Structure probing data (2A3 and DMS) for a 177-nucleotide construct. DMS adducts were read by reverse transcription with MarathonRT. For 2A3, 1,949 sequencing reads were counted. It was measured as part of the RMDB libraries RFM100 and RFMREP. Values cover nucleotides 27 to 126. 2A3 adducts were read by reverse transcription with SuperScript II with manganese. The RNA was probed in 150 mM KOAc, 10 mM MgCl2 and 150 mM bicine (pH 8.5) at 24 C.

[RMDB]
RNA sequence: GGGAACGACUCGAGUAGAGUCGAAAACGCGGUUUUUGAGGACGUCUUUUGUCCGUGCGGUACCGCCCUCCUUGGUCGGCUCCGCCUACUCGGCGGUCGGCAGUGGAGAGGAAUCAAAAACUAGUCCUUAAGCACCUAACUUCGGUUAGGUGCUUAAAAAAGAAACAACAACAACAAC
Reactivity to 2A3 in 0.01 (KOAc 150mM, MgCl2 10mM, bicine 150mM(pH8.5), 24C), signal-to-noise 2, nucleotides 027 to 126: c030g020c000g000g010u000u020u000u000u010g040a110g000g010a000c000g060u080c050u000u020u000u030g010u010c000c000g000u030g000c030g100g100u100a090c090c030g010c010c010c010u000c000c000u030u100g070g000u010c000g030g000c070u030c050c030g010c020c000u170a260c150u050c130g010g000c000g000g020u000c000g010g000c020a050g030u040g030g010a060g010a100g030g010a000a000u020c000a010a010a010a030a030c020u030a040g020u010c000c000
Reactivity to DMS in 0.01 (KOAc 150mM, MgCl2 10mM, bicine 150mM(pH8.5), 24C), signal-to-noise 3, nucleotides 027 to 126: c110g000c020g010g000u000u000u000u000u010g010a150g000g010a030c010g020u010c210u030u010u020u020g010u010c000c010g040u010g000c100g010g000u060a090c080c030g040c020c030c010u000c020c000u010u040g000g030u000c000g010g000c100u030c080c020g000c020c000u000a110c300u030c090g000g010c010g000g000u000c000g000g020c000a020g000u010g000g000a020g000a120g000g020a080a100u000c030a020a000a010a010a010c120u000a300g000u000c000c000